[RMDB]
RNA sequence: GGGAACGACUCGAGUAGAGUCGAAAAAGAUAUGCCGAUGGGACCGAAAGAGCGGCGCAGUACGGUGCUGGCUCCGGUGGAAGAGGCUGCAAUCGUGGCAUUGCGGGUCCAGGCAAGGUUACCGCUAUCACCCACUUUUAUUCGUAAAAGUGGGUGAAAAAGAAACAACAACAACAAC
Reactivity to 2A3 in 0.01 (KOAc 150mM, MgCl2 10mM, bicine 150mM(pH8.5), 24C), signal-to-noise 2, nucleotides 027 to 126: a000g120a080u200a040u140g000c010c030g080a130u110g060g010g030a010c010c010g050a200a140a000g010a020g020c010g000g000c000g000c010a000g060u090a040c060g060g020u020g000c020u040g160g040c010u000c020c010g070g060u090g060g000a090a010g020a030g050g000c010u020g000c000a030a100u060c040g060u090g030g030c090a090u000u100g020c030g000g000g000u000c010c010a000g020g000c010a020a030g070g000u060u070a040c000c010g000c020u010a040
Reactivity to DMS in 0.01 (KOAc 150mM, MgCl2 10mM, bicine 150mM(pH8.5), 24C), signal-to-noise 4, nucleotides 027 to 126: a080g010a130u010a060u000g020c010c000g010a190u000g020g010g000a050c000c000g010a100a140a090g010a040g010c000g020g000c030g010c010a080g010u010a050c160g010g020u000g010c000u000g020g000c010u010c020c030g010g020u010g010g020a130a090g000a080g010g000c010u000g000c020a050a030u010c040g020u020g030g020c100a050u000u000g030c010g010g000g000u000c010c020a120g000g010c050a050a070g000g010u000u000a110c030c010g010c110u000a140